This 177-nucleotide RNA was probed chemically with DMS and 2A3. The data come from the RNA Mapping Database (RMDB), library OK2TRN. 2A3 adducts were read by reverse transcription with SuperScript II with manganese. The RNA was probed in 150 mM KOAc, 10 mM MgCl2 and 150 mM bicine (pH 8.5) at 24 C. Reactivities are given for positions 27 through 126. For 2A3, 22,410 sequencing reads were counted.

RNA sequence: GGGAACGACUCGAGUAGAGUCGAAAAUAAGCCUGGAGGACUGUCUAGCUCUCAUGGUGAGCACUACUCUUUAUGAUGUAUUGCCUUAAUAACAGACUGUACCCUGCAUCUCAUCAAAAUCCUACCACAUGUUCAAAAUAUUCGUAUUUUGAACAUGAAAAGAAACAACAACAACAAC
Reactivity to DMS in 0.01 (KOAc 150mM, MgCl2 10mM, bicine 150mM(pH8.5), 24C), signal-to-noise 9, nucleotides 027 to 126: u000a110a150g010c040c020u000g010g010a080g010g010a070c040u000g010u000c080u000a110g020c030u000c030u000c070a100u000g000g010u000g000a090g010c040a050c080u000a050c030u000c020u000u000u010a080u030g000a040u010g010u000a030u000u000g010c020c050u000u000a080a070u010a070a110c100a070g000a070c050u000g010u000a080c050c030c010u000g010c040a060u010c030u000c040a060u010c090a040a050a080a090u000c020c020u000a080c130c130a190
Reactivity to 2A3 in 0.01 (KOAc 150mM, MgCl2 10mM, bicine 150mM(pH8.5), 24C), signal-to-noise 9, nucleotides 027 to 126: u080a040a010g040c020c020u030g050g040a030g030g030a040c020u040g030u080c040u080a040g010c010u010c000u020c070a070u120g070g010u060g040a030g010c010a010c040u060a020c010u020c010u050u190u100a180u260g070a050u100g020u050a060u030u100g010c000c020u110u120a150a060u090a140a030c020a010g060a060c020u030g030u070a070c010c000c000u010g010c000a040u010c020u010c030a130u020c010a020a040a040a150u010c010c010u030a100c020c030a060